[RMDB]
RNA sequence: GGGAACGACUCGAGUAGAGUCGAAAAGAUAUGGAUUCCUCUGCGGUAGCGAUGAAAUCGGAAACGAUGGAGCUGCGCAGAGGGAAUCCUAAGUCAAAAGAACUUAGCGCUUCGGCGCUAAGUUCAAUCUAAGGCUUCAGUUCGCUGAAGCCUUAGAAAAAGAAACAACAACAACAAC
Reactivity to DMS in 0.01 (KOAc 150mM, MgCl2 10mM, bicine 150mM(pH8.5), 24C), signal-to-noise 1, nucleotides 027 to 126: g000a020u010a300u000g000g000a030u010u000c000c010u000c000u000g010c010g040g040u010a010g040c000g000a110u010g000a080a160a010u000c010g000g010a150a050a180c010g020a040u000g000g010a130g050c010u000g030c000g000c000a010g010a020g010g030g010a010a010u000c000c000u000a040a070g000u010c040a070a050a130a140g000a030a010c000u000u000a010g010c000g020c000u000u000c180g010g000c010g000c000u000a000a000g000u000u000c000a040a090
The record gives the reactivity of an RNA of 177 nucleotides to DMS.
Conditions: 150 mM KOAc, 10 mM MgCl2 and 150 mM bicine (pH 8.5), 24 C.
The data come from the RNA Mapping Database (RMDB), library TTRDEL.